[RMDB]
RNA sequence: GGGAACGACUCGAGUAGAGUCGAAAAUUAACAACUACGCUGGGCGAAGUCGUAUGUCAGCAACAGCUAUACUGAAGCGCGCACGGUAUAGACAUGCUGUCAUACGCCGAGCCUGUGCUGAAGCGCGCACGGCAACCGAAAGGUGCGAGACCCCCAACUUUGGAUUAGGGUUCGCCCUAAUCCAAAGAAAAGAAACAACAACAACAAC
Reactivity to 2A3 in 0.01 (KOAc 150mM, MgCl2 10mM, bicine 150mM(pH8.5), 24C), signal-to-noise 2, nucleotides 027 to 156: u070u110a100a050c050a040a040c040u260a050c020g030c000u020g000g010g000c010g080a110a040g060u110c000g020u000a000u010g010u000c020a000g010c010a020a110c070a290g040c000u000a000u000a000c020u040g100a290a040g020c010g020c010g000c010a000c000g000g030u000a000u010a000g170a110c110a060u130g000c000u000g010u000c000a000u000a000c000g000c010c000g020a020g000c000c000u000g010u010g000c010u000g040a120a050g000c000g000c000g000c010a020c010g020g000c020a050a010c020c000g040a080a040a090g040g020u030g000c000g010a020g000a090c030c000c020c010c000a000a120
The record gives the reactivity of an RNA of 207 nucleotides to 2A3.
Source: RMDB library RNAMAK, as collected in RNAgym.
Conditions: 150 mM KOAc, 10 mM MgCl2 and 150 mM bicine (pH 8.5), 24 C.